[RMDB]
RNA sequence: GGGAACGACUCGAGUAGAGUCGAAAAAAUGAAUAAGAUAUGGACCAUGGGAGUUUGUAUCCUCGUUGAAAUCGGAAACGAUGGAGAGGAUGACAAACGAAGAACAUGGUCCUAAGUCGUGGAGGAACUUUGUUAAUAACUUCGGUUAUUAACAAAGAAAAGAAACAACAACAACAAC
Reactivity to 2A3 in 0.01 (KOAc 150mM, MgCl2 10mM, bicine 150mM(pH8.5), 24C), signal-to-noise 4, nucleotides 027 to 126: a000a010u290g090a090a090u290a220a050g010a030u050a020u170g010g000a000c000c010a010u010g020g010g010a110g020u010u010u020g010u010a010u000c000c000u000c020g160u240u040g020a020a030a000u010c010g000g000a060a020a030c010g000a010u020g000g010a020g000a000g030g000a010u050g080a020c000a010a010a000c020g020a050a020g010a030a000c000a000u000g000g000u000c000c000u000a010a000g010u000c010g040u090g070g080a110g060g070a070a070
Reactivity to DMS in 0.01 (KOAc 150mM, MgCl2 10mM, bicine 150mM(pH8.5), 24C), signal-to-noise 7, nucleotides 027 to 126: a070a060u010g010a110a080u020a120a080g010a060u010a300u010g000g000a010c010c000a010u000g010g000g000a150g010u000u000u000g010u000a040u000c000c000u000c000g000u000u020g000a080a120a020u010c010g000g000a160a070a160c000g010a020u000g000g000a090g010a010g000g000a010u000g010a010c000a000a010a010c000g000a070a080g000a080a130c010a010u000g000g010u000c000c000u000a010a060g010u000c020g000u010g010g010a140g010g010a110a150
The data come from the RNA Mapping Database (RMDB), library TTRDEL.
This 177-nucleotide RNA was probed chemically with 2A3 and DMS.
For DMS, 16,607 sequencing reads were counted.
For DMS the reverse transcriptase was MarathonRT.
Conditions: 150 mM KOAc, 10 mM MgCl2 and 150 mM bicine (pH 8.5), 24 C.